[RMDB]
Structure probing data (2A3 and DMS) for a 177-nucleotide construct. The RNA was probed in 150 mM KOAc, 10 mM MgCl2 and 150 mM bicine (pH 8.5) at 24 C.

RNA sequence: GGGAACGACUCGAGUAGAGUCGAAAAGAGGCAGAGGCGCAGUCGGAGACGGACGAUGUGUUCCUGAGGAAGAUCGAGGCCACGAUGCUGUCCCAGGUUGCGUUGCAAGGCAUACCGGACAUCCACAGGUAGUGUGUAACUUCGGUUACACACUACCAAAAGAAACAACAACAACAAC
Reactivity to 2A3 in 0.01 (KOAc 150mM, MgCl2 10mM, bicine 150mM(pH8.5), 24C), signal-to-noise 2, nucleotides 027 to 126: g040a030g010g040c020a000g010a040g050g000c050g000c020a030g030u020c000g070g000a110g010a040c020g000g040a000c030g090a140u220g080u020g030u170u100c010c020u070g030a080g060g060a040a050g000a060u100c100g040a050g080g050c000c000a010c020g010a020u110g040c010u010g020u030c010c000c000a000g020g000u040u020g010c000g060u090u100g080c050a040a030g060g000c000a020u020a110c000c010g000g000a020c030a050u020c030c000a040c040a060
Reactivity to DMS in 0.01 (KOAc 150mM, MgCl2 10mM, bicine 150mM(pH8.5), 24C), signal-to-noise 3, nucleotides 027 to 126: g010a050g000g000c000a050g020a140g020g000c050g000c040a160g000u000c040g020g010a300g000a050c030g000g000a040c020g000a140u030g000u010g000u010u010c030c010u030g020a110g000g010a300a100g020a070u020c030g010a130g020g010c210c040a140c100g000a130u010g010c020u010g020u000c020c000c030a100g000g000u000u010g000c040g000u000u010g020c110a070a070g000g000c010a050u010a090c040c020g010g000a080c110a080u000c040c060a060c150a130
DMS adducts were read by reverse transcription with MarathonRT.